The record gives the reactivity of an RNA of 177 nucleotides to 2A3 and DMS. For 2A3, 3,707 sequencing reads were counted. The DMS profile rests on 1,462 reads. Conditions: 150 mM KOAc, 10 mM MgCl2 and 150 mM bicine (pH 8.5), 24 C. Values cover nucleotides 27 to 126. The data come from the RNA Mapping Database (RMDB), library TTRDEL.
RNA sequence: GGGAACGACUCGAGUAGAGUCGAAAAGAUAUGGACAGUAGACAUGAUUACGGAUCGGAAACGAUCCGAAUCAACAGCUACAGUCCUAAGUCAAAGACUAACAUAAACUUCGGUUUAUGUUAGUCAACGACCACAAUAACUUCGGUUAUUGUGGUCGAAAAGAAACAACAACAACAAC
Reactivity to 2A3 in 0.01 (KOAc 150mM, MgCl2 10mM, bicine 150mM(pH8.5), 24C), signal-to-noise 2, nucleotides 027 to 126: g020a030u040a060u120g000g010a000c050a060g000u000a040g000a040c080a240u150g010a030u060u160a240c000g000g000a010u010c000g000g040a040a020a020c000g000a000u000c000c010g000a000a000u000c000a030a030c040a020g010c000u000a000c050a000g030u000c000c010u000a100a000g020u020c060a170a060a030g010a000c010u000a000a020c000a010u010a010a010a000c000u030u100c300g090g000u000u000u000a000u000g000u010u000a000g000u000c010a000a010
Reactivity to DMS in 0.01 (KOAc 150mM, MgCl2 10mM, bicine 150mM(pH8.5), 24C), signal-to-noise 2, nucleotides 027 to 126: g000a000u000a300u000g000g000a010c000a100g060u000a020g000a060c070a180u010g030a030u010u020a140c020g030g000a010u000c000g000g020a070a060a160c010g000a000u000c000c000g010a030a000u000c010a010a060c290a140g000c000u000a010c000a100g020u000c000c000u000a020a090g000u000c030a060a090a120g000a000c000u000a000a000c000a000u010a000a000a000c000u000u000c190g000g000u000u000u000a000u000g000u000u000a000g000u000c000a030a060